[RMDB]
RNA sequence: GGGAACGACUCGAGUAGAGUCGAAAAACAGGCAUUCGUGCCUGUGCGGACCUUUGUGUUUAGCGAAGUUAUGGAGCCUAAUAACCACCCAUUGGGUGGUUAGGGCUAUGAAGUAACGGAGCUAAACACUCUGGUAAUGGUGGCACUUCGGUGCCACACCUCUUGCGCAUUUCGAUGCGCAAGAGGUAAAAGAAACAACAACAACAAC
Reactivity to DMS in 0.01 (KOAc 150mM, MgCl2 10mM, bicine 150mM(pH8.5), 24C), signal-to-noise 2, nucleotides 027 to 156: a060c010a030g000g000c000a040u000u000c300g070u000g000c000c010u000g010u000g010c080g010g010a110c020c000u000u020u000g000u000g050u000u000u000a050g000c010g000a300a300g100u000u000a000u010g010g000a050g000c000c000u030a070a220u000a040a020c000c000a010c000c000c000a300u000u000g020g000g030u010g000g000u000u000a020g040g000g020c000u020a020u010g010a220a300g010u000a050a020c000g020g000a300g010c000u020a000a020a030c000a000c000u000c000u000g000g020u000a060a090u000g010g000u020g030g000c000a020c030u020u000c300g000g030u010g020c000c010a000c010
Reactivity to 2A3 in 0.01 (KOAc 150mM, MgCl2 10mM, bicine 150mM(pH8.5), 24C), signal-to-noise 2, nucleotides 027 to 156: a000c000a010g000g020c000a010u060u080c240g100u100g000c000c000u020g020u020g030c060g130g090a020c000c000u010u010u020g010u000g000u000u000u000a000g000c000g010a070a040g000u000u000a020u060g040g000a010g020c000c000u110a270a220u040a020a060c000c010a030c040c050c150a300u300u300g000g000g030u000g050g020u000u000a010g020g010g010c000u020a130u020g000a000a000g000u000a000a000c000g030g000a020g000c000u000a000a000a000c000a000c000u000c000u000g000g000u040a060a150u120g110g000u000g000g000c000a000c020u050u060c250g140g010u000g000c000c010a000c000